[RMDB]
RNA sequence: GGGAACGACUCGAGUAGAGUCGAAAAGAACGCCACAGCAAGGGGGGCGUGCUGGUGACCUACUACGACCCCACCACCCUGGGCUGGGAGGUGCCCUCAAGCUGUCUCCAUCAAAUUCUGGGUGAUGCAUGCUAUAAAUCUUCGGAUUUAUAGCAUGAAAAGAAACAACAACAACAAC
Reactivity to DMS in 0.01 (KOAc 150mM, MgCl2 10mM, bicine 150mM(pH8.5), 24C), signal-to-noise 9, nucleotides 027 to 126: g000a100a080c100g020c030c040a070c080a080g010c100a100a100g010g010g000g000g010g010c020g030u000g010c030u000g000g020u010g010a050c040c020u010a050c050u010a090c080g000a120c040c000c020c020a070c050c020a040c020c010c010u000g000g000g010c100u000g000g000g010a050g000g010u000g010c020c020c050u000c140a080a150g010c030u000g010u010c020u000c020c010a080u010c080a050a070a120u000u010c050u000g010g000g010u000g000a110u000g010
Reactivity to 2A3 in 0.01 (KOAc 150mM, MgCl2 10mM, bicine 150mM(pH8.5), 24C), signal-to-noise 9, nucleotides 027 to 126: g010a030a010c030g030c030c020a030c030a040g130c080a100a160g100g030g000g000g010g020c010g010u010g020c030u020g010g100u090g020a030c010c010u010a020c010u060a120c050g110a180c000c010c000c000a010c010c000a010c000c000c010u030g020g020g000c020u030g020g010g010a030g000g020u040g010c010c010c000u090c040a040a020g010c020u040g050u090c010u000c010c010a130u150c050a050a070a070u130u030c030u060g010g000g020u020g010a010u080g040